Overview: Structure probing data (2A3 and DMS) for a 177-nucleotide construct. The data come from the RNA Mapping Database (RMDB), library OK1LIB. The RNA was probed in 150 mM KOAc, 10 mM MgCl2 and 150 mM bicine (pH 8.5) at 24 C.
RNA sequence: GGGAACGACUCGAGUAGAGUCGAAAAACGAGUGGUCUCAGGUUUAUGAGAAGUCGGAACCCCUGGGCCUCAAGCAAGGGGCGCCGACCAAGAAGACGGGGUCAACGGUGCGGUUCUGGGCCGACCCCCGCAUCUUCGUCUUCGGACGAAGAUGCGGAAAAGAAACAACAACAACAAC
Reactivity to 2A3 in 0.01 (KOAc 150mM, MgCl2 10mM, bicine 150mM(pH8.5), 24C), signal-to-noise 1, nucleotides 027 to 126: a000c080g020a050g020u050g000g050u020c000u000c000a020g170g020u050u230u140a110u180g060a000g020a080a000g000u000c000g000g100a300a190c000c000c000c000u050g000g260g080c010c000u080c100a020a020g000c030a000a060g000g000g000g000c020g010c000c010g000a050c030c000a090a090g000a030a000g050a000c010g000g000g000g010u000c070a060a030c190g040g040u140g040c050g000g040u100u160c100u180g000g000g210c060c030g000a100c030c000c010
Reactivity to DMS in 0.01 (KOAc 150mM, MgCl2 10mM, bicine 150mM(pH8.5), 24C), signal-to-noise 1, nucleotides 027 to 126: a100c110g000a070g040u000g020g030u010c000u010c000a100g010g000u000u000u030a020u060g000a130g010a060a140g000u000c090g000g020a000a070c000c000c000c000u080g000g000g030c000c000u170c250a260a220g000c000a270a000g000g000g030g000c300g000c000c060g030a030c010c170a160a110g000a080a000g030a000c100g010g000g000g030u000c100a070a140c130g000g000u030g150c060g000g000u000u050c120u110g000g150g010c060c030g010a170c080c090c050